[RMDB]
This 177-nucleotide RNA was probed chemically with 2A3 and DMS.
The reactions ran in a buffer of 150 mM KOAc, 10 mM MgCl2 and 150 mM bicine (pH 8.5), at 24 C.
For DMS, 6,858 sequencing reads were counted.
For 2A3, 19,120 sequencing reads were counted.
It was measured as part of the RMDB library TTRDES.
RNA sequence: GGGAACGACUCGAGUAGAGUCGAAAAGAUAUGGAACCGUUGUAGACAUGCUUCCCACGUCGGAAACGACGUGGGUCGAGCAACAGCUACACGGUUCCUAAGUCAAAUCCUUCGGUUCGCCGAAGGAGGCGUAUAUACAGUUCGCUGUAUAUACGCCAAAAGAAACAACAACAACAAC
Reactivity to 2A3 in 0.01 (KOAc 150mM, MgCl2 10mM, bicine 150mM(pH8.5), 24C), signal-to-noise 5, nucleotides 027 to 126: g010a000u030a010u050g000g010a000a010c010c020g040u120u300g010u020a030g030a080c160a300u300g010c000u040u040c000c000c000a000c000g000u000c000g010g000a040a020a000c010g010a000c000g000u000g030g000g000u020c050g010a000g000c020a060a110c040a120g020c000u000a010c000a000c010g000g010u000u000c000c000u000a000a000g000u000c000a060a040a160u050c010c000u010u000c010g030g060u060u090c300g070c110c010g000a010a000g000g000a020
Reactivity to DMS in 0.01 (KOAc 150mM, MgCl2 10mM, bicine 150mM(pH8.5), 24C), signal-to-noise 5, nucleotides 027 to 126: g000a030u010a220u010g000g000a000a010c010c000g010u010u010g020u010a000g000a050c140a300u020g010c010u010u010c000c010c000a000c000g030u000c000g020g010a060a050a060c000g010a010c000g060u000g010g010g000u010c180g010a010g030c010a080a080c260a180g010c000u000a000c000a020c010g000g010u000u000c000c000u000a010a070g000u000c010a140a140a270u000c000c000u000u000c020g010g010u000u010c250g000c000c000g010a020a010g000g010a010